[RMDB]
RNA sequence: GGGAACGACUCGAGUAGAGUCGAAAAGAGUUCUUCACCUGCCCAAAGGUGAGGAUCUUGCCAUGAUGGGCUGGUCUGGAGGAAUCAGAGUUUUGAUGGUAAGGAGGGGGUAGUGCUCACCUUCAGAUAAUUUAAUCAUGUUCGCAUGAUUAAAUUAAAAAGAAACAACAACAACAAC
Reactivity to 2A3 in 0.01 (KOAc 150mM, MgCl2 10mM, bicine 150mM(pH8.5), 24C), signal-to-noise 5, nucleotides 027 to 126: g020a010g030u030u020c000u000u010c000a020c010c010u060g060c030c050c000a080a110a000g010g000u020g010a000g020g000a010u020c020u010u050g030c010c020a120u140g040a060u090g070g100g000c040u030g020g050u030c060u060g060g030a060g020g040a060a050u080c030a040g030a040g090u060u120u160u170g090a060u070g010g060u080a080a060g040g020a060g010g030g000g020g010u060a050g050u050g090c010u020c030a110c020c000u020u040c010a020g010a080
Reactivity to DMS in 0.01 (KOAc 150mM, MgCl2 10mM, bicine 150mM(pH8.5), 24C), signal-to-noise 9, nucleotides 027 to 126: g000a060g010u000u000c000u000u000c010a010c010c010u000g010c030c050c050a070a160a040g010g010u000g000a010g010g000a030u000c010u000u000g010c030c020a090u010g010a150u010g010g000g010c050u000g000g010u000c050u000g010g000a070g010g010a120a050u000c070a070g010a100g010u000u000u000u000g010a070u000g010g010u010a060a080g000g010a110g010g010g000g000g020u000a080g000u000g010c050u000c050a090c050c030u000u000c040a060g000a160
Conditions: 150 mM KOAc, 10 mM MgCl2 and 150 mM bicine (pH 8.5), 24 C. This 177-nucleotide RNA was probed chemically with 2A3 and DMS. Values cover nucleotides 27 to 126. It was measured as part of the RMDB library OK2TRN. 2A3 adducts were read by reverse transcription with SuperScript II with manganese. For 2A3, 8,226 sequencing reads were counted. DMS adducts were read by reverse transcription with MarathonRT.